[RMDB]
RNA sequence: GGGAACGACUCGAGUAGAGUCGAAAAAGCACGUAGUGUUUGAAGAUUUCGGUCCUAUGCAAUAUGAACCCAUGAACCAUGUCAGGUCCUGACGGAAGCAGCAUUAAGUGGAUCAUCAUAUGUGCCGUAGGGUAGCCGAGAUUUAGCUAACGACUUUAUGUUAAGUUAGCUUCGGCUAACUUAACAUAAAAGAAACAACAACAACAAC
Reactivity to 2A3 in 0.01 (KOAc 150mM, MgCl2 10mM, bicine 150mM(pH8.5), 24C), signal-to-noise 3, nucleotides 027 to 156: a000g090c040a010c020g090u030a010g010u040g060u140u140u220g080a070a030g010a030u010u000u010c200g120g030u300c000c000u030a030u040g000c000a000a010u000a000u020g000a020a020c000c020c010a010u020g010a020a040c110c000a040u000g030u060c000a000g030g050u010c020c030u160g170a040c140g010g020a000a000g010c020a000g000c000a000u000u060a070a010g010u000g000g010a000u030c020a010u000c000a000u050a040u070g270u080g090c080c030g020u000a000g010g020g000u020a010g000c010c020g000a000g000a000u060u060u090a020g000c010u030a010a040c020g060a060c010u000u040u000

Record summary: Structure probing data (2A3) for a 207-nucleotide construct. The RNA was probed in 150 mM KOAc, 10 mM MgCl2 and 150 mM bicine (pH 8.5) at 24 C.